Annotation
Chemical mapping of a 207-nucleotide RNA with DMS and 2A3. For 2A3, 1,554 sequencing reads were counted. Conditions: 150 mM KOAc, 10 mM MgCl2 and 150 mM bicine (pH 8.5), 24 C. Source: RMDB library OK3TST, as collected in RNAgym.
[RMDB]
RNA sequence: GGGAACGACUCGAGUAGAGUCGAAAAAUCGUAUUGAGCCAGAGGUCAAACCCUGGAUCGAUAUUGGGUUCAACCACUUCGCUGGCAGUAUUGUCACCGGUAGUAUCAACAUUUGUGGGUGAGACCGUUUUCUCAUCCGUUUGUGUUUGGCUAUCCGCGUAGACUCGUAGUUCGCUACGAGUCUACGAAAAGAAACAACAACAACAAC
Reactivity to DMS in 0.01 (KOAc 150mM, MgCl2 10mM, bicine 150mM(pH8.5), 24C), signal-to-noise 1, nucleotides 027 to 156: a050u000c050g050u000a090u010u010g030a080g010c000c000a020g010a040g020g010u030c300a150a030a300c000c000c050u000g000g010a030u000c030g000a030u000a000u000u000g040g000g050u000u010c060a080a140c010c030a130c110u000u000c150g090c070u000g010g030c030a090g010u010a050u000u010g040u000c040a100c060c020g020g030u000a010g030u000a110u010c030a040a030c000a010u000u000u000g030u000g030g010g010u020g020a040g000a050c230c300g010u000u000u000u000c020u010c000a020u000c000c000g000u000u000u000g010u000g040u000u000u010g010g010c030u000a060u020c010c060g030
Reactivity to 2A3 in 0.01 (KOAc 150mM, MgCl2 10mM, bicine 150mM(pH8.5), 24C), signal-to-noise 4, nucleotides 027 to 156: a000u020c020g000u010a010u020u040g000a010g000c000c010a020g100a290g060g050u210c150a220a200a300c040c000c030u040g010g020a050u040c020g010a010u000a050u130u240g060g000g020u060u080c050a060a070c050c010a080c100u180u150c140g060c130u040g010g000c010a020g060u140a080u300u130g020u050c030a040c040c030g010g010u000a000g000u030a060u290c020a000a020c010a030u030u040u080g060u040g000g000g010u010g000a000g000a010c080c080g060u180u050u220u040c000u000c000a000u010c000c000g020u010u010u020g030u010g010u040u020u090g010g000c010u030a030u160c020c010g000